[RMDB]
RNA sequence: GGGAACGACUCGAGUAGAGUCGAAAAUGCUUGGUUUGCCCACUAGUAAUGUUUCUCCAGUCGCCUUACAACAAGCUCGCUCUUUCCAAGGCUCGGCUGCUCCAUCGCGCUUCCUCCUUCCCAUUCACUAUGCUAUGCCAUUCGUGGCAUAGCAUAGAAAAGAAACAACAACAACAAC
Reactivity to DMS in 0.01 (KOAc 150mM, MgCl2 10mM, bicine 150mM(pH8.5), 24C), signal-to-noise 4, nucleotides 027 to 126: u010g000c030u000u000g010g020u000u000u010g020c020c010c020a170c100u000a080g010u000a070a090u000g010u000u000u010c030u000c050c050a060g010u010c080g020c030c030u000u010a040c120a040a090c130a060a090g010c050u000c080g010c060u000c040u000u000u000c060c060a090a120g010g010c040u010c060g000g020c060u000g020c030u000c020c030a050u000c060g020c080g000c050u000u000c030c010u000c030c020u000u010c000c000c010a140u010u000c110a190
Reactivity to 2A3 in 0.01 (KOAc 150mM, MgCl2 10mM, bicine 150mM(pH8.5), 24C), signal-to-noise 2, nucleotides 027 to 126: u060g010c010u040u070g040g030u110u080u110g050c030c000c010a050c040u050a060g100u050a010a230u100g030u020u060u060c010u030c020c030a020g010u070c030g030c020c020u050u140a070c040a090a000c020a050a100g000c020u000c050g020c000u020c010u070u060u000c030c010a050a040g050g000c000u010c030g050g000c030u030g000c010u000c020c020a080u020c060g000c010g010c050u050u020c000c010u000c030c000u020u010c000c010c000a000u100u070c030a030